[RMDB]
The record gives the reactivity of an RNA of 177 nucleotides to 2A3.
Reactivities are given for positions 27 through 126.
Source: RMDB library OK1LIB, as collected in RNAgym.
The RNA was probed in 150 mM KOAc, 10 mM MgCl2 and 150 mM bicine (pH 8.5) at 24 C.

RNA sequence: GGGAACGACUCGAGUAGAGUCGAAAAAUUUAAGGGCCAGGACGGUCACCUUUGGGGUGGUGACAAGUGUGAUCACUUGGGUGGUGGCUGUGUUUGCGUCUCUCCCAGGAAUCUCGUUUACCAGAUCCGUCCAGCAUGGAUUCGUCCAUGCUGGACGAAAAGAAACAACAACAACAAC
Reactivity to 2A3 in 0.01 (KOAc 150mM, MgCl2 10mM, bicine 150mM(pH8.5), 24C), signal-to-noise 2, nucleotides 027 to 126: a000u210u180u100a090a040g000g000g000c000c000a010g000g030a000c000g000g030u040c000a010c020c000u040u050u190g090g000g000g000u090g000g000u020g040a030c000a080a090g160u160g010u000g230a080u010c000a000c000u040u040g100g020g050u100g000g000u000g000g000c000u000g020u000g130u040u090u060g090c070g090u000c010u000c000u000c000c000c050a020g200g000a150a150u060c020u000c070g070u070u080u070a190c070c020a020g000a030u090c000